[RMDB]
RNA sequence: GGGAACGACUCGAGUAGAGUCGAAAACACUUCCGUUCGCGGAAGUGAAAAAAGAUAUGGAAUAUAAUAUUCCAUAGUUCCUAUAAUCUCGGAAACGAGGUAGGAAUCAUGGAAUUCUAUAUUCCUAAGUCAAAAAAGAAUUAGUUCGCUAAUUCAAGUAAGCUUAACUGUUCGCAGUUAAGCUUACAAAAGAAACAACAACAACAAC
Reactivity to 2A3 in 0.01 (KOAc 150mM, MgCl2 10mM, bicine 150mM(pH8.5), 24C), signal-to-noise 2, nucleotides 027 to 156: c010a000c000u000u010c010c020g030u050u060c300g040c020g100g020a020a020g000u020g000a120a000a010a000a000a020g050a020u110a050u150g000g000a010a000u020a000u010a010a050u040a020u040u010c000c000a000u000a030g000u000u000c000c000u020a020u020a200a150u070c000u000c000g040g020a060a080a070c020g000a000g000g020u000a000g020g010a010a020u090c000a000u040g010g000a000a010u050u020c020u010a000u010a000u000u000c000c000u010a120a010g020u010c030a000a090a110a160a050a060g020a000a000u050u000a010g030u050u080c160g020c220u010a000a000u030u010c030a070a010